Source: RMDB library 15KREP, as collected in RNAgym. Structure probing data (DMS and 2A3) for a 177-nucleotide construct. 2A3 is a SHAPE reagent: it acylates the 2'-hydroxyl of flexible nucleotides of all four kinds. The reactions ran in a buffer of 150 mM KOAc, 10 mM MgCl2 and 150 mM bicine (pH 8.5), at 24 C. Values cover nucleotides 27 to 126. The 2A3 profile rests on 21,770 reads. For 2A3 the reverse transcriptase was SuperScript II with manganese.
RNA sequence: GGGAACGACUCGAGUAGAGUCGAAAAGUAUAAAGGUUGCUGCUAUGCAGUCUAAACUUACAGAUCUUAAAUGCACAUCUGUGGUUCUCCUCUCUGUGCUCCAACAGUUACACUUAGAGGCUAAUAGCAUACUUAUAGGGUUCGCCCUAUAAGUAUGAAAAGAAACAACAACAACAAC
Reactivity to DMS in 0.01 (KOAc 150mM, MgCl2 10mM, bicine 150mM(pH8.5), 24C), signal-to-noise 9, nucleotides 027 to 126: g010u010a060u000a060a180a050g010g010u000u000g010c010u000g020c070u000a060u000g000c030a030g010u000c020u000a100a060a020c020u000u000a040c030a020g000a030u000c080u000u010a060a120a130u010g020c270a100c250a030u000c010u000g010u000g010g010u000u000c070u000c010c010u000c010u000c020u000g010u000g010c090u000c090c060a060a100c200a100g010u000u010a100c040a020c030u000u000a050g010a050g010g010c300u000a050a050u000a050g010
Reactivity to 2A3 in 0.01 (KOAc 150mM, MgCl2 10mM, bicine 150mM(pH8.5), 24C), signal-to-noise 9, nucleotides 027 to 126: g050u040a050u100a230a170a020g020g010u020u020g010c010u010g070c060u090a040u220g010c000a000g010u010c010u020a050a050a010c020u050u130a010c010a010g030a020u010c010u070u190a220a300a240u240g040c070a050c000a090u010c010u010g010u010g040g010u050u030c020u010c030c000u010c000u000c000u000g010u020g040c030u040c050c020a090a080c020a130g050u150u100a020c020a010c030u020u030a010g000a010g050g020c030u070a090a050u040a130g040